[RMDB]
RNA sequence: GGGAACGACUCGAGUAGAGUCGAAAAUCAACGCAAAGCCGCGGCAAGUGGAGUUAGCGAGAAGAGACUAGGCUUUGGUUUCUUCAAGUGAAGCGGUCACCAAUCAGGUGUGGUAGUUACCGUAAAAAUAACCGCUCUUUGUUCGCAAAGAGCGGAAGGACUUUAUCUCCUUCGGGAGAUAAAGUCCAAAAGAAACAACAACAACAAC
Reactivity to 2A3 in 0.01 (KOAc 150mM, MgCl2 10mM, bicine 150mM(pH8.5), 24C), signal-to-noise 1, nucleotides 027 to 156: u040c010a000a060c050g000c020a050a110a110g000c000c000g030c010g000g080c050a150a240g120u080g060g130a150g040u160u110a020g000c030g090a060g000a050a000g000a000g010a020c010u040a060g010g180c060u080u230u210g000g000u000u000u000c020u020u000c040a060a030g020u050g250a150a000g000c020g040g010u050c000a000c020c000a000a180u300c180a030g260g050u050g020u070g160g060u090a000g090u070u040a040c010c010g020u080a000a060a000a030a140u120a090a100c040c000g000c000u000c000u070u000u020g040u000u020c140g000c180a000a000a000g010a000g060c010g000g000a000a000

Structure probing data (2A3) for a 207-nucleotide construct. Values cover nucleotides 27 to 156. Source: RMDB library M2RFPK, as collected in RNAgym. The RNA was probed in 150 mM KOAc, 10 mM MgCl2 and 150 mM bicine (pH 8.5) at 24 C.